This 307-nucleotide RNA was probed chemically with 2A3 and DMS. The RNA was probed in 150 mM KOAc, 10 mM MgCl2 and 150 mM bicine (pH 8.5) at 24 C. For DMS the reverse transcriptase was MarathonRT. Source: RMDB library POS240, as collected in RNAgym. The DMS profile rests on 4,748 reads.
RNA sequence: GGGAACGACUCGAGUAGAGUCGAAAACCGUGGCUUCGGCCACGGACCGCGUUCUUCGGAACGCGGAGUUGUGACUUCGGUCACAACAGCAUCACACGUGAGUGUGAUGCAAGCUACGCUCGUGAGAGCGUAGCAAAGUCCAUAUGCCCACCUUCGCUGCUCCGGGUGGAUGCUUAUACAUGCUAUGGAUGCCUACAUUUGAAAUAAUGUAGAUGCCUAAUACUCUCUCUCAGGGAGAGAGUUUAGAUGCCUCCAAAGGAGAUGCUAACGAGCGGUUCGCCGCUCGUAAAAGAAACAACAACAACAAC
Reactivity to 2A3 in 0.01 (KOAc 150mM, MgCl2 10mM, bicine 150mM(pH8.5), 24C), signal-to-noise 3, nucleotides 027 to 266: c010c000g000u000g000g010c020u030u100c300g100g000c020c000a000c000g000g000a000c010c000g000c010g000u030u010c010u030u050c210g110g030a000a000c000g000c000g000g010a040g010u010u000g020u000g000a010c000u020u050c300g090g000u000c000a000c000a010a000c000a000g000c010a000u000c000a000c000a000c000g090u070g170a130g000u000g020u000g000a000u000g000c000a010a000g020c000u000a000c000g000c010u000c000g040u050g050a130g000a000g030c000g000u000a000g010c000a030a000a010g020u020c020c010a020u040a010u200g000c000c000c000a000c000c000u030u050c040g010c050u130g010c000u010c000c000g000g010g000u010g020g010a050u140g040c000u120u060a100u090a180c100a110u240g090c000u100a020u100g010g010a000u020g020c000c000u010a000c000a000u000u000u070g160a150a110a030u220a090a000u030g000u020a010g020a080u160g030c010c010u050a090a050u170a170c010u010c000u010c010u000c010u020c130a110g110g300g000a000g010a000g000a020g010u000u000u000a000g000a010u090g060c000c030u080c010c020a100a080a070g010g000a030g020a040u060g000c000u040a080
Reactivity to DMS in 0.01 (KOAc 150mM, MgCl2 10mM, bicine 150mM(pH8.5), 24C), signal-to-noise 2, nucleotides 027 to 266: c010c000g020u000g020g010c000u000u000c220g020g040c000c000a000c020g000g000a080c000c010g020c000g000u000u000c000u000u020c180g020g000a000a000c000g000c000g000g010a040g030u000u010g010u000g010a010c000u000u010c210g010g020u000c010a000c000a000a000c010a170g000c000a010u010c000a020c000a020c000g010u040g010a150g030u000g010u000g000a000u000g000c000a070a100g000c000u000a000c000g010c000u000c000g040u020g000a210g030a030g020c000g040u000a000g010c010a020a050a090g000u000c020c040a070u000a060u010g010c020c010c020a040c040c030u000u020c120g010c040u020g020c010u000c030c040g000g000g020u000g000g000a120u020g000c100u010u010a070u000a120c230a110u020g020c060u010a080u000g000g000a010u000g020c240c000u000a000c000a000u000u010u000g000a130a130a080u010a010a000u000g000u000a010g010a180u010g010c050c020u000a000a010u040a040c000u000c000u000c000u000c000u010c220a130g040g000g010a000g000a000g000a000g000u000u000u000a000g010a130u010g010c060c040u000c050c060a090a140a040g000g000a040g000a060u000g000c030u010a130